[RMDB]
RNA sequence: GGGAACGACUCGAGUAGAGUCGAAAAGAUAUGGAUCCUGACAUGCUGCUACAUUCGGAAACGAAUGGUCAGCAACAGCACAUGGAUCCUAAGUCAAAAGUGUGAACUAGUUCGCUAGUUCACACAAGUACGAUGUGACCUUCGGGUCACAUCGUACAAAAGAAACAACAACAACAAC
Reactivity to 2A3 in 0.01 (KOAc 150mM, MgCl2 10mM, bicine 150mM(pH8.5), 24C), signal-to-noise 1, nucleotides 027 to 126: g000a000u000a000u020g020g000a000u000c000c000u010g010a030c100a300u170g000c030u040g010c000u000a010c020a010u030u010c020g000g000a010a010a000c000g010a010a010u050g020g070u240c040a000g110c010a060a300c200a070g010c000a010c010a040u190g050g000a000u000c000c000u000a020a020g010u030c050a000a000a160a190g010u030g000u020g000a000a000c000u000a000g030u040u040c130g060c200u000a010g010u020u000c020a000c000a020c000a000a000
Reactivity to DMS in 0.01 (KOAc 150mM, MgCl2 10mM, bicine 150mM(pH8.5), 24C), signal-to-noise 1, nucleotides 027 to 126: g010a010u000a060u020g010g000a000u000c000c000u000g010a300c300a220u010g000c010u000g030c000u020a060c000a010u010u000c010g030g000a030a060a030c000g000a010a000u000g000g000u000c240a010g050c000a110a060c250a020g020c060a120c010a030u030g040g000a000u000c010c000u000a010a020g000u000c010a010a150a100a060g010u000g000u000g000a030a040c000u000a000g000u000u000c200g040c000u000a000g010u000u000c000a000c010a000c020a040a050